RNA sequence: GGGAACGACUCGAGUAGAGUCGAAAACAUUAUUCAGAAGCUGUUCCCUCAGUAAAUGCGCUGUUUUCCAUCAGGAAAUACAGGCUACCGAAACAUGCGUCUCUAUGCAGGCGACAACCGGGAGGUUGAUCAUCUCCUCGUUCGCGAGGAGAUGAUCAAAAGAAACAACAACAACAAC
Reactivity to 2A3 in 0.01 (KOAc 150mM, MgCl2 10mM, bicine 150mM(pH8.5), 24C), signal-to-noise 1, nucleotides 027 to 126: c000a060u120u120a110u200u120c070a080g030a140a010g030c010u040g050u020u030c000c000c000u030c010a050g000u040a000a050a100u030g010c200g000c040u000g000u000u000u020u040c050c050a230u210c100a170g000g020a030a020a000u140a040c010a020g030g030c020u030a010c000c040g000a000a000a120c060a000u170g000c000g000u040c000u030c000u090a260u260g000c100a000g030g000c030g010a020c000a030a000c000c000g000g000g020a000g100g010u000u050
The record gives the reactivity of an RNA of 177 nucleotides to 2A3. The data come from the RNA Mapping Database (RMDB), library RFMREP. For 2A3, 622 sequencing reads were counted. The RNA was probed in 150 mM KOAc, 10 mM MgCl2 and 150 mM bicine (pH 8.5) at 24 C.